[RMDB]
Source: RMDB library OK2TRN, as collected in RNAgym.
This 177-nucleotide RNA was probed chemically with DMS and 2A3.
For 2A3 the reverse transcriptase was SuperScript II with manganese.
Conditions: 150 mM KOAc, 10 mM MgCl2 and 150 mM bicine (pH 8.5), 24 C.
Values cover nucleotides 27 to 126.
RNA sequence: GGGAACGACUCGAGUAGAGUCGAAAAGUUCUCCUGGGCUUUGCUGGCAGUGAAAGGAGAUGGGUAAUGAGUCUGUGUGGAUUCCUUGGCUUCGAUACAUUGUGUGGUCAGCCGAGCAUUUGGAAAGCCCUAGCAGAAAGUUCGCUUUCUGCUAGGGAAAAGAAACAACAACAACAAC
Reactivity to DMS in 0.01 (KOAc 150mM, MgCl2 10mM, bicine 150mM(pH8.5), 24C), signal-to-noise 3, nucleotides 027 to 126: g020u010u000c010u000c000c060u010g000g020g000c030u010u000u000g020c050u010g000g020c030a090g010u000g010a070a120a140g000g000a110g000a040u010g010g000g010u000a070a050u000g010a050g010u000c070u000g020u000g020u000g000g000a090u000u000c050c040u000u000g010g000c020u000u000c110g000a150u010a100c040a130u000u000g010u010g020u000g030g010u000c080a070g010c020c020g000a040g000c080a090u000u000u000g000g000a110a100a180g020
Reactivity to 2A3 in 0.01 (KOAc 150mM, MgCl2 10mM, bicine 150mM(pH8.5), 24C), signal-to-noise 1, nucleotides 027 to 126: g010u010u030c020u020c000c030u040g030g060g000c020u000u010u210g000c010u010g010g000c000a040g020u080g130a240a050a010g010g030a080g000a020u080g080g070g010u120a140a050u100g030a050g000u070c040u080g070u050g110u150g210g000a070u130u070c010c010u050u050g120g000c020u030u000c070g030a000u050a110c040a100u080u160g040u100g040u040g230g000u010c010a000g020c000c000g020a000g020c040a000u100u080u200g040g020a040a050a030g000